[RMDB]
RNA sequence: GGGAACGACUCGAGUAGAGUCGAAAAGCUAGAAGGUUCGCCUUCUAGCAAAGAAAGCGGAAAACACCGAAAUAAAACGGUGAGCGCCGCAACCACCCAUAAAAAGGAUCAACUUCGGUUGAUCCAAGUCUAAUCUUCUGUUCGCAGAAGAUUAGACAAAAGAAACAACAACAACAAC
Reactivity to DMS in 0.01 (KOAc 150mM, MgCl2 10mM, bicine 150mM(pH8.5), 24C), signal-to-noise 2, nucleotides 027 to 126: g000c000u000a000g000a000a000g000g010u000u010c220g010c000c000u010u020c000u000a000g010c000a020a020a180g030a110a220a120g000c000g010g000a020a050a120a110c020a000c030c000g000a110a090a140u020a140a060a140a090c040g000g030u000g000a020g050c300g000c020c000g000c020a150a120c100c060a180c020c000c000a120u020a040a040a040a050a190g020g000a000u000c010a020a020c000u000u000c140g040g010u000u000g000a010u000c000c000a010a010
Reactivity to 2A3 in 0.01 (KOAc 150mM, MgCl2 10mM, bicine 150mM(pH8.5), 24C), signal-to-noise 3, nucleotides 027 to 126: g000c000u000a000g000a010a000g000g020u100u180c180g060c000c000u000u010c010u000a000g020c000a000a000a000g020a010a010a010g010c010g030g020a040a070a060a020c000a000c010c010g080a090a130a120u240a060a200a040a040c000g010g000u000g020a020g020c050g040c020c000g020c010a000a000c030c030a030c000c010c010a010u170a040a140a000a010a030g000g000a000u010c010a000a000c000u030u090c280g080g000u010u010g000a010u010c000c000a000a010

Annotation: An RNA of 177 nucleotides, treated with DMS and 2A3 and read out base by base. The RNA was probed in 150 mM KOAc, 10 mM MgCl2 and 150 mM bicine (pH 8.5) at 24 C. It was measured as part of the RMDB library M2PK50. For DMS, 1,144 sequencing reads were counted.